[RMDB]
RNA sequence: GGGAACGACUCGAGUAGAGUCGAAAAAUUAUGGGUGUCGUGUUGACAAAGCGGAAAUACUGCAAUCGCAUUGCGCUGUGGCUAAAAGACGCAUCGGACUCCGACGCCGUUGCUGCCAUUGAAAAGCCCUUUUAAAAUCGUUCGCGAUUUUAAAAGGAAAAGAAACAACAACAACAAC
Reactivity to DMS in 0.01 (KOAc 150mM, MgCl2 10mM, bicine 150mM(pH8.5), 24C), signal-to-noise 5, nucleotides 027 to 126: a060u020u010a060u010g020g020g020u000g020u000c030g030u010g020u010u000g010a070c060a050a090a090g010c020g010g000a080a060a090u010a100c090u000g010c050a070a090u000c090g020c020a300u000u000g010c040g020c100u010g020u000g010g020c070u020a070a040a070a110g010a090c110g020c030a030u000c040g010g010a090c060u000c070c070g010a070c120g000c020c010g010u000u000g000c100u000g010c020c020a080u000u010g000a080a050a070a150g000c090
Reactivity to 2A3 in 0.01 (KOAc 150mM, MgCl2 10mM, bicine 150mM(pH8.5), 24C), signal-to-noise 2, nucleotides 027 to 126: a000u260u200a110u200g000g020g000u030g010u010c020g020u050g060u130u210g030a040c060a060a130a020g010c020g020g070a070a120a050u170a140c040u100g010c030a020a070u090c040g010c090a070u040u120g000c020g000c040u020g030u030g050g000c040u070a070a060a010a130g030a010c020g000c010a030u040c030g040g020a070c050u030c080c060g030a040c060g000c010c010g000u010u020g000c010u030g000c010c020a050u070u160g070a130a100a020a070g020c010